[RMDB]
RNA sequence: GGGAACGACUCGAGUAGAGUCGAAAAUUGGGGAGACCAGGUCGAAGAAUCUGUUAUUUGUGCAUUGGUAUUUGCCUUCGAAUUGCACAAGCACAUGGAGAUGAGGACUCCCAUCUGCAUGCAAUUCCAAAUUACAAAGCUUCGGCUUUGUAAUUUGAAAAGAAACAACAACAACAAC
Reactivity to 2A3 in 0.01 (KOAc 150mM, MgCl2 10mM, bicine 150mM(pH8.5), 24C), signal-to-noise 3, nucleotides 027 to 126: u100u040g060g010g000g000a010g030a050c000c030a000g040g060u020c050g070a200a040g040a080a130u030c040u040g070u140u090a210u140u130u020g030u020g020c040a040u050u050g040g040u110a260u170u180u300g040c030c000u100u080c120g110a070a090u110u020g010c000a000c040a040a020g000c010a030c010a060u010g030g030a070g000a050u050g020a040g020g070a030c010u010c040c000c010a000u000c000u030g060c000a040u040g040c000a010a120u180u000c020
Reactivity to DMS in 0.01 (KOAc 150mM, MgCl2 10mM, bicine 150mM(pH8.5), 24C), signal-to-noise 3, nucleotides 027 to 126: u020u010g030g010g020g010a060g000a110c080c020a020g010g010u000c030g000a180a160g000a110a090u020c160u000g010u000u000a120u010u000u000g010u000g020c030a030u000u000g010g000u010a150u000u010u020g010c040c060u000u020c200g010a070a050u000u010g000c000a010c050a020a050g000c120a060c170a010u010g000g000a170g010a030u000g000a300g010g010a160c080u000c010c000c010a040u000c020u020g010c050a060u000g000c090a080a120u000u000c070
Description: Conditions: 150 mM KOAc, 10 mM MgCl2 and 150 mM bicine (pH 8.5), 24 C. Chemical mapping of a 177-nucleotide RNA with 2A3 and DMS. For DMS the reverse transcriptase was MarathonRT. The 2A3 profile rests on 1,947 reads. It was measured as part of the RMDB library OK2TRN.